[RMDB]
RNA sequence: GGGAACGACUCGAGUAGAGUCGAAAAGUCGGUGCAGUGCAACAGUGCCGGCGGCCGGGUGCUGCAGAGCAGCGGCGACUACCGCAUGGCCGGCCUGCCCUCCGUGAGCGUGGUGCCGUGCGAUGGCACUCGAGGUACCUUUCGAGGUACCUCGAGUAAAAGAAACAACAACAACAAC
Reactivity to DMS in 0.01 (KOAc 150mM, MgCl2 10mM, bicine 150mM(pH8.5), 24C), signal-to-noise 3, nucleotides 027 to 126: g040u020c020g010g020u000g000c010a070g040u020g000c140a100a160c170a050g000u010g000c020c030g010g010c020g000g020c060c050g000g000g040u000g030c000u000g040c110a080g030a100g030c100a080g010c000g000g000c010g000a130c090u010a080c030c060g020c040a070u040g000g000c010c040g000g000c020c000u010g010c050c020c010u000c030c050g000u040g010a100g000c130g020u010g000g010u020g010c040c010g030u010g020c040g000a070u020g010g010c050
Reactivity to 2A3 in 0.01 (KOAc 150mM, MgCl2 10mM, bicine 150mM(pH8.5), 24C), signal-to-noise 4, nucleotides 027 to 126: g070u070c030g030g040u020g010c020a050g050u030g160c080a150a070c030a100g040u040g110c000c000g020g010c000g010g010c000c000g030g000g050u050g000c010u020g000c070a100g010a070g300c060a010g030c000g020g010c010g060a030c030u100a060c000c030g000c080a110u080g050g000c000c020g000g030c000c020u040g000c020c000c020u040c040c050g090u140g060a050g000c010g000u100g000g020u050g010c000c020g010u080g030c050g050a060u100g030g000c010